[RMDB]
RNA sequence: GGGAACGACUCGAGUAGAGUCGAAAAACAGAAAAAAGGAGUUUAAAGUAGAUUUGCAAACGGACGGUACUAAAUACCGUCACUUUUACGUCUAACUUAUCGUUAACUCUGCAAAAAGAAAACAAGAAAAACAAGCGUGAGUUCGCUCACGCUUGAACAGAGGACAAGUGUUCGCACUUGUCCUCUGAAAAGAAACAACAACAACAAC
Reactivity to 2A3 in 0.01 (KOAc 150mM, MgCl2 10mM, bicine 150mM(pH8.5), 24C), signal-to-noise 1, nucleotides 027 to 156: a000c050a040g070a030a080a000a000a040a010g040g000a020g010u100u110u090a100a030a000g010u000a000g000a040u060u070u220g040c030a000a080a000c050g060g000a000c000g020g040u010a000c050u260a130a100a100u030a000c000c000g000u000c000a040c000u000u020u000u060a010c000g000u000c010u030a070a130c010u080u040a050u290c050g030u030u020a030a020c000u000c030u080g010c050a080a130a000a080a000g090a020a050a010a000c030a100a000g120a070a090a000a030a030c000a000a000g020c000g000u000g000a000g000u050u140c080g030c090u000c000a000c000g000c000u000u000g010a000a000
The data come from the RNA Mapping Database (RMDB), library M2RFOK.
This 207-nucleotide RNA was probed chemically with 2A3.
For 2A3 the reverse transcriptase was SuperScript II with manganese.
The reactions ran in a buffer of 150 mM KOAc, 10 mM MgCl2 and 150 mM bicine (pH 8.5), at 24 C.